[RMDB]
RNA sequence: GGGAACGACUCGAGUAGAGUCGAAAAGUUAUGGAAAACGUCUUAGCUACCACUACAACAUCAAUGCUGGACGGUGAUGGUUCGACUUACUCGAAACCAUCACGUAGUGGUAGUCGUUCCCAUUCAAAAGGAGAUAUGACUUCGGUCAUAUCUCCUUAAAAGAAACAACAACAACAAC
Reactivity to 2A3 in 0.01 (KOAc 150mM, MgCl2 10mM, bicine 150mM(pH8.5), 24C), signal-to-noise 2, nucleotides 027 to 126: g030u050u050a080u190g100g020a030a030a050a020c020g020u060c050u110u060a010g000c020u010a000c010c040a030c010u070a010c020a220a000c000a010u080c060a140a180u150g050c060u070g090g000a010c020g010g020u040g010a010u020g030g000u020u000c000g000a030c080u070u180a060c030u030c000g010a080a020a020c010c000a000u060c000a010c030g070u030a010g050u000g020g000u020a000g000u020c000g000u000u000c010c010c000a020u110u120c060a050a120
Reactivity to DMS in 0.01 (KOAc 150mM, MgCl2 10mM, bicine 150mM(pH8.5), 24C), signal-to-noise 2, nucleotides 027 to 126: g020u000u000a120u000g030g010a040a160a040a050c050g010u000c030u000u010a100g030c020u000a060c020c020a030c020u000a000c040a120a070c110a100u000c100a060a070u010g020c100u000g000g000a040c060g040g030u000g000a010u000g000g010u000u010c000g060a010c170u000u020a090c170u000c000g000a040a030a030c020c010a020u010c010a000c030g010u000a040g010u000g020g010u000a040g010u000c020g000u010u010c000c000c000a120u000u000c090a040a040
This 177-nucleotide RNA was probed chemically with 2A3 and DMS. Reactivities are given for positions 27 through 126. The RNA was probed in 150 mM KOAc, 10 mM MgCl2 and 150 mM bicine (pH 8.5) at 24 C. 2A3 adducts were read by reverse transcription with SuperScript II with manganese. The DMS profile rests on 1,526 reads. DMS adducts were read by reverse transcription with MarathonRT.